[RMDB]
This 207-nucleotide RNA was probed chemically with DMS and 2A3. The RNA was probed in 150 mM KOAc, 10 mM MgCl2 and 150 mM bicine (pH 8.5) at 24 C. The 2A3 profile rests on 3,492 reads. The DMS profile rests on 4,460 reads. 2A3 adducts were read by reverse transcription with SuperScript II with manganese.

RNA sequence: GGGAACGACUCGAGUAGAGUCGAAAAUCAACACUGCCUCAUGAGCUACUGCUCUCCUGCUCUUUGAAAAGACAAAUCCUUAUUUCUUUGUAGUGAUCCAGAAGGCAGUGGGAAGAAUGACAGGUGCUUGGUUAUCUUCAAUUUAAUCUCUACCUUAGUAAAUGGUACUGUUCGCAGUACCAUUUACAAAAGAAACAACAACAACAAC
Reactivity to DMS in 0.01 (KOAc 150mM, MgCl2 10mM, bicine 150mM(pH8.5), 24C), signal-to-noise 2, nucleotides 027 to 156: u000c020a050a100c000a040c020u000g030c000c000u010c030a170u010g010a090g000c010u000a070c100u000g030c000u000c020u000c060c010u010g030c010u000c040u000u000u000g010a070a090a090a110g000a220c060a040a100a080u000c080c040u000u000a140u000u000u000c040u010u010u000g010u010a090g040u000g010a080u000c090c040a130g020a090a030g020g020c020a020g040u000g010g020g000a040a100g000a090a100u000g020a080c050a080g020g000u000g000c020u010u000g010g000u010u000a080u000c050u000u020c060a080a130u010u010u000a060a060u000c020u000c020u000a090c050c040u000u000a260
Reactivity to 2A3 in 0.01 (KOAc 150mM, MgCl2 10mM, bicine 150mM(pH8.5), 24C), signal-to-noise 5, nucleotides 027 to 156: u090c020a000a040c010a000c010u010g000c000c010u040c040a100u110g020a020g010c030u180a120c120u170g040c010u010c020u020c050c040u030g040c020u020c000u100u070u090g080a070a070a010a010g070a030c080a080a120a060u120c000c030u100u100a120u110u110u020c050u020u100u080g060u070a020g000u020g080a100u060c050c030a040g020a110a010g080g000c000a010g000u010g000g020g000a020a020g020a050a070u080g010a020c030a040g000g060u080g100c070u090u100g040g030u030u050a050u050c030u080u040c020a060a090u070u080u180a090a090u050c040u030c010u160a130c020c010u040u060a040